[RMDB]
This 177-nucleotide RNA was probed chemically with DMS and 2A3. For DMS, 1,273 sequencing reads were counted. The 2A3 profile rests on 2,687 reads.
RNA sequence: GGGAACGACUCGAGUAGAGUCGAAAAGAUAUGGACAUAGCCGACAUCAGAAGGAUGUCGGAAACGACAUUGCUUCGACGACGUCGGAACUACUAUGUCCUAAGUCAAAGCUCAGCUUCGGCUGAGCGCGAUACGUGACCUUCGGGUCACGUAUCGCAAAAGAAACAACAACAACAAC
Reactivity to DMS in 0.01 (KOAc 150mM, MgCl2 10mM, bicine 150mM(pH8.5), 24C), signal-to-noise 2, nucleotides 027 to 126: g010a030u000a300u020g000g000a020c010a000u000a010g020c000c000g120a040c010a020u000c020a170g000a030a000g000g010a000u000g000u000c000g000g000a020a030a220c010g020a000c000a020u010u000g000c000u000u000c010g000a200c190g000a020c070g020u030c050g000g010a020a020c100u000a300c040u010a000u000g020u000c000c000u020a020a040g010u000c000a060a060a260g000c000u000c000a000g000c000u000u000c300g030g000c000u000g000a010g000c020
Reactivity to 2A3 in 0.01 (KOAc 150mM, MgCl2 10mM, bicine 150mM(pH8.5), 24C), signal-to-noise 2, nucleotides 027 to 126: g040a030u070a060u170g000g010a010c000a000u000a000g070c040c000g000a000c010a080u110c060a090g010a020a000g020g020a010u030g000u010c000g010g080a010a000a000c020g000a000c010a000u110u240g300c070u010u050c020g220a220c120g030a040c070g050u020c000g030g040a010a010c030u250a020c010u010a030u040g020u050c000c000u030a090a050g020u000c040a080a120a050g000c000u000c000a000g000c010u120u190c300g200g000c000u000g000a010g000c000

2A3 adducts were read by reverse transcription with SuperScript II with manganese. In probing experiments dimethyl sulfate is read out at A N1 and C N3, which are open when not base-paired.